[RMDB]
Structure probing data (2A3) for a 207-nucleotide construct. For 2A3, 723 sequencing reads were counted. 2A3 is a SHAPE reagent: it acylates the 2'-hydroxyl of flexible nucleotides of all four kinds. It was measured as part of the RMDB library PDB130.

RNA sequence: GGGAACGACUCGAGUAGAGUCGAAAAUUAACUUGAAAGUGGCUAGCCGUUGCCUUCUGCGUGAGCAGGGCUGCGUGUCAAGUCUAUGGACUCGACUCUUGCACAUCUACGUCUUAGGUUUGCGCCAAUUCGUGGUAAGCUAGGGUCAAUGAGCUUAUCCUCUUUUCUCGUUCGCGAGAAAAGAGGAAAAAGAAACAACAACAACAAC
Reactivity to 2A3 in 0.01 (KOAc 150mM, MgCl2 10mM, bicine 150mM(pH8.5), 24C), signal-to-noise 2, nucleotides 027 to 156: u140u010a090a060c020u050u040g050a070a010a030g090u110g070g000c050u030a020g000c000c050g030u030u030g000c000c000u180u150c040u040g040c000g100u220g070a110g000c010a060g000g030g030c020u030g000c000g000u270g040u030c070a090a000g000u050c000u020a130u080g050g040a030c000u020c040g000a000c000u000c000u010u060g070c040a080c010a050u090c020u010a000c020g010u000c000u010u130a190g020g040u100u070u210g090c110g030c020c010a000a000u010u010c020g000u030g030g010u040a030a030g000c000u010a010g000g000g000u000c000a050a080u100g030a000g000c000u020u030a000

For 2A3 the reverse transcriptase was SuperScript II with manganese.